[RMDB]
RNA sequence: GGGAACGACUCGAGUAGAGUCGAAAACGAUAUGCAGCAUGUACUCUAGGGAUGCGUAUUAGUAUGCUCGUAGAACGCUAUAUUUGAACUGUCAUGAAAAUGACAGUAGUACAUGCGACGAGCAUAAGGUAGUUGUUCAUUUCGAUGGACGACUACCAAAAGAAACAACAACAACAAC
Reactivity to DMS in 0.01 (KOAc 150mM, MgCl2 10mM, bicine 150mM(pH8.5), 24C), signal-to-noise 9, nucleotides 027 to 126: c050g010a140u030a030u020g000c080a130g020c000a010u000g010u000a010c000u010c160u010a090g010g010g020a080u010g010c000g000u000a070u020u020a100g020u010a010u000g000c000u010c000g010u000a090g010a100a100c050g010c020u010a080u030a090u030u040u030g010a100a040c000u000g010u000c010a000u010g000a090a050a120a010u000g000a010c000a000g000u000a000g000u010a000c020a000u000g000c010g010a030c010g000a010g000c000a010u010a040a110
Reactivity to 2A3 in 0.01 (KOAc 150mM, MgCl2 10mM, bicine 150mM(pH8.5), 24C), signal-to-noise 9, nucleotides 027 to 126: c050g030a080u080a040u280g080c040a010g000c010a010u010g000u020a010c000u050c090u200a120g080g080g060a060u100g010c000g010u030a090u090u070a090g090u020a010u020g000c000u000c000g010u020a030g060a150a010c010g000c060u050a040u020a090u300u110u190g060a030a010c000u000g000u000c000a010u010g080a070a070a050a010u010g000a000c000a000g000u000a000g000u000a000c000a000u010g000c000g010a000c000g000a000g000c000a000u010a020a010